The record gives the reactivity of an RNA of 177 nucleotides to 2A3 and DMS.
Source: RMDB library M2PK50, as collected in RNAgym.
The reactions ran in a buffer of 150 mM KOAc, 10 mM MgCl2 and 150 mM bicine (pH 8.5), at 24 C.
For 2A3 the reverse transcriptase was SuperScript II with manganese.

RNA sequence: GGGAACGACUCGAGUAGAGUCGAAAACUUAACGCGUUCGCGCGUUAAGAAACAACAUAAACAUCGAGUUGACGAUGACAGAAAUACCGUCAGUGUAGACGGAAAGCAUUCGCUUCGGCGAAUGCAACAGCUCUGGAUAGUUCGCUAUCCAGAGCUGAAAAGAAACAACAACAACAAC
Reactivity to 2A3 in 0.01 (KOAc 150mM, MgCl2 10mM, bicine 150mM(pH8.5), 24C), signal-to-noise 1, nucleotides 027 to 126: c010u000u000a010a000c000g010c000g050u000u080c180g010c000g000c030g120u000u020a000a010g000a020a050a010c030a060a010c000a100u210a060a150a010c000a060u020c000g030a030g140u090u080g160a060c030g000a020u010g060a030c040a070g190a020a120a030u150a150c020c000g000u000c020a070g120u110g130u300a050g010a010c010g050g000a140a050a000g000c010a020u060u000c010g000c030u030u020c160g200g000c010g020a000a000u000g000c020a000a000
Reactivity to DMS in 0.01 (KOAc 150mM, MgCl2 10mM, bicine 150mM(pH8.5), 24C), signal-to-noise 1, nucleotides 027 to 126: c000u000u000a000a020c000g010c000g000u020u000c260g070c000g010c000g000u000u000a000a000g000a120a080a060c030a100a080c150a070u000a050a080a280c000a010u000c030g000a160g000u000u010g000a200c010g000a080u000g000a130c170a100g000a080a040a060u000a030c020c020g000u000c000a150g030u020g000u000a180g000a010c000g000g010a050a040a140g010c040a020u000u000c030g000c010u000u000c160g020g020c030g010a000a000u000g010c000a020a120